[RMDB]
The record gives the reactivity of an RNA of 177 nucleotides to 2A3 and DMS. For DMS, 2,944 sequencing reads were counted. The 2A3 profile rests on 805 reads. Conditions: 150 mM KOAc, 10 mM MgCl2 and 150 mM bicine (pH 8.5), 24 C. Values cover nucleotides 27 to 126. The data come from the RNA Mapping Database (RMDB), library OK1LIB. Values are in units of 0.01, from 0 to 300, in steps of 10.
RNA sequence: GGGAACGACUCGAGUAGAGUCGAAAAUUUUAUGAAACUUAAAAACUAAAGGAGGAUUUAGUAGUAAAUCAAGAGCAGAGUGCUUGAUUGAAUAAGGCCAUGAAGCACGCACACACCGCCCGUCACCAAGACGGCAGAUAUUCGUAUCUGCCGUCUUAAAAGAAACAACAACAACAAC
Reactivity to 2A3 in 0.01 (KOAc 150mM, MgCl2 10mM, bicine 150mM(pH8.5), 24C), signal-to-noise 1, nucleotides 027 to 126: u040u030u000u000a090u130g010a100a020a060c030u010u060a040a040a030a090a030c040u150a050a010a050g110g000a100g050g000a060u050u040u040a050g030u000a000g080u020a010a000a030u000c000a030a000g010a000g210c060a030g040a090g150u190g020c000u010u010g000a040u000u030g010a000a030u050a100a000g080g010c000c000a000u060g040a010a000g050c070a000c060g030c000a000c020a000c000a000c020c000g020c050c000c000g060u070c000a030c020c000
Reactivity to DMS in 0.01 (KOAc 150mM, MgCl2 10mM, bicine 150mM(pH8.5), 24C), signal-to-noise 2, nucleotides 027 to 126: u020u020u020u010a030u020g030a120a120a130c050u020u000a000a100a070a140a040c050u000a000a020a060g000g000a150g020g000a040u000u000u000a030g000u010a110g030u030a060a050a020u000c020a020a030g010a070g000c100a100g000a070g030u060g010c020u000u000g000a010u000u000g010a100a120u010a010a070g000g000c040c060a050u030g040a060a110g010c100a040c030g000c070a030c060a030c000a060c020c020g010c020c040c020g020u010c050a110c060c110